Record summary:
This 177-nucleotide RNA was probed chemically with 2A3 and DMS. Conditions: 150 mM KOAc, 10 mM MgCl2 and 150 mM bicine (pH 8.5), 24 C. The DMS profile rests on 3,032 reads.
[RMDB]
RNA sequence: GGGAACGACUCGAGUAGAGUCGAAAAGAUAUGGACAGUUCGAGGGUCGAGGAAUCGGAAACGAUUCUCCCCACCGGGAGCCCUAAGACAGACUGUCCUAAGUCAAAGCCUCUCUUCGGAGAGGCAACAUGACAGGUAUGUUCGCAUACCUGUCAUGAAAAGAAACAACAACAACAAC
Reactivity to 2A3 in 0.01 (KOAc 150mM, MgCl2 10mM, bicine 150mM(pH8.5), 24C), signal-to-noise 2, nucleotides 027 to 126: g010a010u040a000u060g000g000a010c000a000g010u050u030c030g030a020g070g010g030u110c160g190a170g060g150a040a000u000c010g000g000a030a020a020c020g000a000u000u020c010u040c000c000c000c010a110c050c090g010g000g010a010g010c000c000c000u070a180a030g030a010c040a010g010a010c000u010g000u000c020c000u010a040a010g010u020c030a170a040a010g000c010c000u000c010u000c010u060u090c250g170g000a000g000a000g000g000c010a000a000
Reactivity to DMS in 0.01 (KOAc 150mM, MgCl2 10mM, bicine 150mM(pH8.5), 24C), signal-to-noise 5, nucleotides 027 to 126: g000a030u000a130u010g000g000a020c000a040g000u000u000c020g000a000g020g010g020u000c110g000a200g000g010a020a010u000c000g020g000a040a010a080c000g000a010u000u000c020u000c020c010c000c110a120c300c280g000g000g010a160g000c010c000c000u020a220a090g010a030c300a090g000a010c010u000g000u000c000c000u010a000a040g000u000c010a090a100a090g000c000c000u000c000u000c000u000u010c250g010g000a000g000a020g000g000c020a000a030